[RMDB]
RNA sequence: GGGAACGACUCGAGUAGAGUCGAAAACGCUGGGGUUAAGGCUCACAGAUCUUGGAUUUACACCUGAAUCCCACUGAAGCGCGCACGGUGGGUGAGUGUUGUCAGAUUCACAGGCCUUAACCCUGUGCUGAAGCGCGCACGGCAACCGAAAGGUGCGGAAUUACGAGAGGUUCGCCUCUCGUAAUUCAAAAGAAACAACAACAACAAC
Reactivity to 2A3 in 0.01 (KOAc 150mM, MgCl2 10mM, bicine 150mM(pH8.5), 24C), signal-to-noise 3, nucleotides 027 to 156: c040g000c020u040g090g000g000g000u000u000a000a000g020g020c030u080c090a110c060a100g100a080u040c040u090u280g170g040a130u270u170u130a010c010a010c010c030u070g110a100a110u110c020c000c000a000c010u030g020a180a020g020c000g000c000g000c000a020c030g000g000u000g000g030g000u050g100a130g000u020g050u040u120g080u100c050a020g000a040u070u070c080a090c040a170g030g000c000c000u010u010a010a000c010c000c000u030g000u000g000c000u040g010a080a030g000c000g000c000g000c010a000c000g010g000c010a030a030c010c000g020a050a060a010g020g000u030g020c050g030
Reactivity to DMS in 0.01 (KOAc 150mM, MgCl2 10mM, bicine 150mM(pH8.5), 24C), signal-to-noise 1, nucleotides 027 to 156: c050g020c020u000g000g000g010g050u010u010a010a040g030g020c000u000c030a120c260a120g000a020u010c040u010u000g040g010a100u010u000u000a040c010a020c060c030u000g030a150a200u000c000c000c010a020c030u000g010a080a040g050c020g030c010g080c010a290c020g010g030u000g030g010g080u000g000a020g080u000g030u000u000g030u010c030a120g010a080u010u000c020a210c140a140g000g030c040c010u000u000a020a040c060c000c000u020g000u000g020c060u000g010a090a020g000c000g010c040g020c010a300c020g000g010c030a070a100c000c010g020a140a080a100g000g030u030g010c030g000